Conditions: 150 mM KOAc, 10 mM MgCl2 and 150 mM bicine (pH 8.5), 24 C. The record gives the reactivity of an RNA of 177 nucleotides to DMS and 2A3. It was measured as part of the RMDB library OK2TST. For DMS, 4,189 sequencing reads were counted.

[RMDB]
RNA sequence: GGGAACGACUCGAGUAGAGUCGAAAAAUUAGUGAUGAAGAAAGGGUCAUUACAGGUUUAAAACCGAGUUCAGUAAUUGGGCGAUUAUGGGGGGAAAUACCGUGCAUUAUAAUCCCGGGACGAACCCCUUACUCUUGUGAUUCGUCACAAGAGUAAGAAAAGAAACAACAACAACAAC
Reactivity to DMS in 0.01 (KOAc 150mM, MgCl2 10mM, bicine 150mM(pH8.5), 24C), signal-to-noise 5, nucleotides 027 to 126: a050u000u010a120g020u010g010a030u000g000a070a060g020a110a090a110g020g000g010u010c050a030u000u000a040c060a210g010g010u000u000u020a070a060a100a130c050c020g000a100g010u000u000c060a070g010u000a070a100u000u010g010g000g010c040g010a080u010u020a070u010g010g020g000g010g010g010a070a090a080u000a040c050c020g010u010g020c140a070u010u010a080u010a100a130u000c060c050c000g000g030g000a050c070g010a180a240c030c010c030
Reactivity to 2A3 in 0.01 (KOAc 150mM, MgCl2 10mM, bicine 150mM(pH8.5), 24C), signal-to-noise 2, nucleotides 027 to 126: a030u090u130a020g010u000g060a070u040g030a020a070g130a090a110a090g140g100g030u010c010a000u000u060a030c030a060g090g050u070u110u190a120a190a020a000c020c000g030a060g030u040u010c010a000g000u080a210a150u180u050g000g000g030c010g010a020u050u130a130u300g010g010g000g000g010g020a110a010a000u080a030c020c010g000u020g020c010a040u110u020a050u230a230a010u000c000c010c010g000g020g010a010c010g010a000a050c000c020c000